Description
The record gives the reactivity of an RNA of 177 nucleotides to 2A3 and DMS. DMS adducts were read by reverse transcription with MarathonRT.

[RMDB]
RNA sequence: GGGAACGACUCGAGUAGAGUCGAAAAUUAAGCCAUGCAAGUCUGGUGAAGCGAAAGUGGAACUGCGAACGGCUCAGUAGAACGGUGAUUAUUUAAUCGUGUAGGAAGGAUAACCGCGGGAAACUGUACAAGCAACAUUAUUCGUAAUGUUGCUUGUAAAAGAAACAACAACAACAAC
Reactivity to 2A3 in 0.01 (KOAc 150mM, MgCl2 10mM, bicine 150mM(pH8.5), 24C), signal-to-noise 6, nucleotides 027 to 126: u080u030a060a010g010c000c000a030u080g040c030a050a080g030u030c040u030g050g010u070g060a060a020g020c040g080a160a020a010g040u090g020g050a050a040c010u040g010c030g040a080a020c050g040g000c010u000c050a060g040u080a010g030a110a010c010g010g050u050g050a050u030u110a050u090u130u180a100a070u080c050g020u040g000u060a020g040g040a110a010g030g000a010u030a050a030c030c010g010c060g030g000g020a030a060a010c030u030g010u030
Reactivity to DMS in 0.01 (KOAc 150mM, MgCl2 10mM, bicine 150mM(pH8.5), 24C), signal-to-noise 6, nucleotides 027 to 126: u010u030a090a150g000c040c020a050u010g010c070a070a090g010u010c050u010g000g020u010g010a190a120g000c060g000a050a090a090g030u010g020g000a090a060c060u000g010c040g010a050a040c070g000g010c020u000c050a060g010u010a030g010a120a060c080g000g030u030g000a060u000u000a090u030u010u010a070a050u010c030g010u020g000u010a080g010g010a050a110g000g000a040u020a070a100c050c040g000c060g000g000g000a090a050a090c060u020g010u000

The RNA was probed in 150 mM KOAc, 10 mM MgCl2 and 150 mM bicine (pH 8.5) at 24 C. Values are in units of 0.01, from 0 to 300, in steps of 10. For 2A3 the reverse transcriptase was SuperScript II with manganese. Source: RMDB libraries RFM100 and RFMREP, as collected in RNAgym.